The record gives the reactivity of an RNA of 207 nucleotides to 2A3. Values cover nucleotides 27 to 156.
[RMDB]
RNA sequence: GGGAACGACUCGAGUAGAGUCGAAAAUCUUCCAGGGCACGAAGGUUGCGUCUCUACACGAGGCGUAACCUGGGAGGGCGCCAAUAUGGCGCCUAAUUGUGAAUAAAUUAUCACAAUUACUCUUACGAGUGAGAGGGGGAUCUGCUUUGCCCUCUCUGCAAUGAUUGAGGUUCGCCUCAAUCAUUGCAAAAGAAACAACAACAACAAC
Reactivity to 2A3 in 0.01 (KOAc 150mM, MgCl2 10mM, bicine 150mM(pH8.5), 24C), signal-to-noise 1, nucleotides 027 to 156: u070c060u090u040c040c020a020g000g000g030c040a000c120g030a090a030g010g000u020u030g020c010g010u030c010u000c000u040a130c280a060c290g000a000g000g060c000g000u020a000a010c000c020u020g010g000g060a180g000g000g030c000g000c000c010a070a030u270a110u280g000g000c030g000c010c000u000a010a000u000u000g000u000g010a040a030u100a220a150a070u300u100a080u100c000a000c000a000a010u000u010a040c000u030c030u160u060a080c060g020a010g140u130g050a060g000a000g000g000g000g000g000a040u030c040u090g110c130u170u170u200g000c010c010c000u000c010u010c000u000